[RMDB]
An RNA of 177 nucleotides, treated with 2A3 and DMS and read out base by base. 2A3 adducts were read by reverse transcription with SuperScript II with manganese. Values are in units of 0.01, from 0 to 300, in steps of 10. For 2A3, 1,355 sequencing reads were counted.
RNA sequence: GGGAACGACUCGAGUAGAGUCGAAAAUAAUUGGGCAGAGCAAAUUGCACAUGGUAAACCAAGUGGUAUUGAUACGCAAACGAUUGUAUCAGGCAAACCAGUUUGGUUCCAAAAAGGUCAUGCUGAACCAAACUGCUGCAUUCGUGCAGCAGUUUGGAAAAGAAACAACAACAACAAC
Reactivity to 2A3 in 0.01 (KOAc 150mM, MgCl2 10mM, bicine 150mM(pH8.5), 24C), signal-to-noise 3, nucleotides 027 to 126: u150a000a130u130u130g030g020g000c050a060g000a040g090c060a080a060a290u040u050g010c030a000c030a070u080g010g110u160a000a020a040c000c000a000a000g010u030g000g000u060a090u190u000g000a000u000a010c050g020c150a150a300a040c140g070a090u100u200g000u000a000u000c000a000g130g020c110a270a000a060c020c000a000g030u030u020u060g030g000u120u180c000c070a070a120a000a000a000g070g030u060c030a010u100g000c010u050g040a060a070
Reactivity to DMS in 0.01 (KOAc 150mM, MgCl2 10mM, bicine 150mM(pH8.5), 24C), signal-to-noise 2, nucleotides 027 to 126: u000a050a030u030u000g040g010g010c100a050g020a050g000c080a030a060a030u000u000g020c010a000c100a170u010g050g030u000a190a000a000c000c000a100a040g020u050g000g020u000a050u020u000g000a000u000a020c090g000c160a190a050a120c230g020a070u080u010g060u000a000u000c000a030g000g050c140a080a040a080c050c000a010g020u000u000u000g000g000u010u000c050c000a080a050a160a110a110g050g020u000c100a160u010g010c100u000g010a070a030
The DMS profile rests on 1,391 reads.